Overview
The record gives the reactivity of an RNA of 177 nucleotides to 2A3. The 2A3 profile rests on 1,132 reads.
[RMDB]
RNA sequence: GGGAACGACUCGAGUAGAGUCGAAAACGGAACACAGUGAGUGGACGGAACAAAUCCCCUUCCCACCUCCCCACUGUCCACUCACUGUCUUCCUAAGAGGAAAUAUAAAUCGGGGGUGGGAAGGGGAAAUAGUGAUGGCCUUCGGGCCAUCACUAUUAAAAGAAACAACAACAACAAC
Reactivity to 2A3 in 0.01 (KOAc 150mM, MgCl2 10mM, bicine 150mM(pH8.5), 24C), signal-to-noise 2, nucleotides 027 to 126: c030g000g000a020a000c030a000c010a010g030u010g000a000g000u000g000g000a030c000g000g050a060a040c010a090a100a080u070c000c010c000c000u010u020c000c000c000a000c000c010u060c050c080c040c070a060c010u000g000u000c020c030a020c000u010c010a000c010u000g000u000c020u030u020c010c000u000a050a060g050a100g110g180a020a190a000u300a040u090a060a170a040u260c100g000g000g020g000g000u000g010g000g000a000a000g000g000g000g000a000
The reactions ran in a buffer of 150 mM KOAc, 10 mM MgCl2 and 150 mM bicine (pH 8.5), at 24 C.